[RMDB]
RNA sequence: GGGAACGACUCGAGUAGAGUCGAAAAAGACUACAAUAAAUGCUUAAUUCUUCAAUGCCCAGGCAGCAGCGAAUAUCCAUAAGCAUGAAAACCAUCCAGGAAUACAUGAUCUCACCAAACAAACUAAAUAAAGCACCAGUGACCAGUACUGGAGAGGCAGUUGAUCAGUGUUCGCACUGAUCAACUGAAAAGAAACAACAACAACAAC
Reactivity to 2A3 in 0.01 (KOAc 150mM, MgCl2 10mM, bicine 150mM(pH8.5), 24C), signal-to-noise 2, nucleotides 027 to 156: a010g050a030c030u120a090c190a000a170u250a240a140a040u050g010c010u030u110a030a080u220u040c020u060u040c040a010a100u070g030c000c010c010a040g090g000c000a020g020c000a010g000c000g090a080a030u140a080u050c050c030a010u000a080a020g000c010a010u050g080a080a060a000a000c020c000a000u000c010c000a010g050g030a100a000u140a070c020a030u140g080a160u000c070u080c040a050c040c010a030a040a060c030a070a090a000c050u160a260a130a090u110a100a070a000g050c010a030c080c020a000g010u010g120a040c080c080a030g050u040a000c060u030g000g000a010g000a060g060g020
The record gives the reactivity of an RNA of 207 nucleotides to 2A3. Conditions: 150 mM KOAc, 10 mM MgCl2 and 150 mM bicine (pH 8.5), 24 C. Reactivities are given for positions 27 through 156. It was measured as part of the RMDB library OK3TST.